[RMDB]
RNA sequence: GGGAACGACUCGAGUAGAGUCGAAAAGAUAUGGAGUGUCUUUGGGUGGUAGACGCUCGGAAACGAGGCGUCUAUAAUCACCGACACUCCUAAGUCAAACAGUCAAGCCCUUCGGGGCUUGACUGAACAAUUAACUCAGCUUCGGCUGAGUUAAUUGAAAAGAAACAACAACAACAAC
Reactivity to DMS in 0.01 (KOAc 150mM, MgCl2 10mM, bicine 150mM(pH8.5), 24C), signal-to-noise 2, nucleotides 027 to 126: g000a010u000a100u000g010g010a010g020u000g000u000c010u000u010u010g040g050g010u000g040g010u000a000g010a010c010g010c010u000c000g020g010a000a020a030c000g010a030g020g020c000g000u000c000u010a010u000a090a100u010c010a010c010c000g000a010c000a000c000u000c000c000u000a000a050g000u000c010a140a160a250c010a010g000u000c000a010a000g020c010c010c000u000u010c190g030g020g010g020c000u000u010g000a000c010u000g010a040a080
Reactivity to 2A3 in 0.01 (KOAc 150mM, MgCl2 10mM, bicine 150mM(pH8.5), 24C), signal-to-noise 1, nucleotides 027 to 126: g020a020u000a010u120g000g000a020g000u010g000u050c110u180u300u300g170g030g020u020g020g010u000a010g010a000c000g030c010u050c000g000g030a030a010a000c010g000a020g210g050c000g020u020c030u000a010u020a000a060u180c000a000c010c010g000a000c000a000c010u020c000c000u020a000a000g000u000c030a040a090a150c000a010g000u020c000a010a010g010c000c000c020u050u130c300g050g020g000g000c000u000u000g000a000c000u000g000a000a000

The data come from the RNA Mapping Database (RMDB), library TTRDEL. Chemical mapping of a 177-nucleotide RNA with DMS and 2A3. For 2A3 the reverse transcriptase was SuperScript II with manganese. DMS adducts were read by reverse transcription with MarathonRT. For DMS, 2,617 sequencing reads were counted.